[RMDB]
RNA sequence: GGGAACGACUCGAGUAGAGUCGAAAAACAUAUUACGAUAUGAUUCAGAUGGUGUCUUACUGGUUCGUACCAAGGGACAUAAUGGCUUCUUGUUUCCAACCAAAGAACAAGUGGCGAGCCUGAAUAAAAAACUGACUGCCGUUCGCGGCAGUCAGAACUUAGGCACAGAGUUCGCUCUGUGCCUAAGAAAAGAAACAACAACAACAAC
Reactivity to 2A3 in 0.01 (KOAc 150mM, MgCl2 10mM, bicine 150mM(pH8.5), 24C), signal-to-noise 2, nucleotides 027 to 156: a000c110a040u130a040u130u240a090c070g060a010u010a030u160g060a060u050u040c030a040g070a130u140g070g100u020g000u000c000u010u110a190c050u050g020g020u080u180c120g130u230a020c020c000a030a030g030g000g000a000c010a000u050a040a020u110g100g000c000u000u000c000u000u000g050u040u150u000c010c070a120a130c030c000a150a300a110g010a010a010c000a010a010g000u010g040g000c000g020a000g010c050c010u000g060a030a030u050a020a100a050a000a000a000c000u000g010a010c010u000g050c000c000g030u050u080c250g000c020g120g070c070a000g000u000c000a000g000a000a000